[RMDB]
Annotation
The data come from the RNA Mapping Database (RMDB), libraries RFM100 and RFMREP. This 177-nucleotide RNA was probed chemically with DMS. For DMS the reverse transcriptase was MarathonRT.
RNA sequence: GGGAACGACUCGAGUAGAGUCGAAAAUUCUCCUCUGAUCUUCGUGAUCAGAGUUUUGAGUCGUCAGACUACGAGCAGUUUCUCUUAGUCGUUGCAUCGGGUGCUGUUGCCUUAAGCAUGUGUAUAUAAGAUGACCCAUAUUCGUAUGGGUCAUCUUAAAAGAAACAACAACAACAAC
Reactivity to DMS in 0.01 (KOAc 150mM, MgCl2 10mM, bicine 150mM(pH8.5), 24C), signal-to-noise 2, nucleotides 027 to 126: u000u000c000u000c030c010u000c000u000g000a000u000c000u000u030c170g010u020g000a000u000c000a010g000a010g000u000u030u020u000g000a030g000u010c010g000u000c090a090g000a040c000u030a020c040g000a020g010c280a170g020u010u010u010c020u000c020u000u010a040g000u000c020g010u000u000g000c040a080u000c120g020g000g000u010g000c060u020g040u000u010g000c030c040u010u010a090a120g000c110a040u010g000u010g010u000a080u030a070u010
The reactions ran in a buffer of 150 mM KOAc, 10 mM MgCl2 and 150 mM bicine (pH 8.5), at 24 C.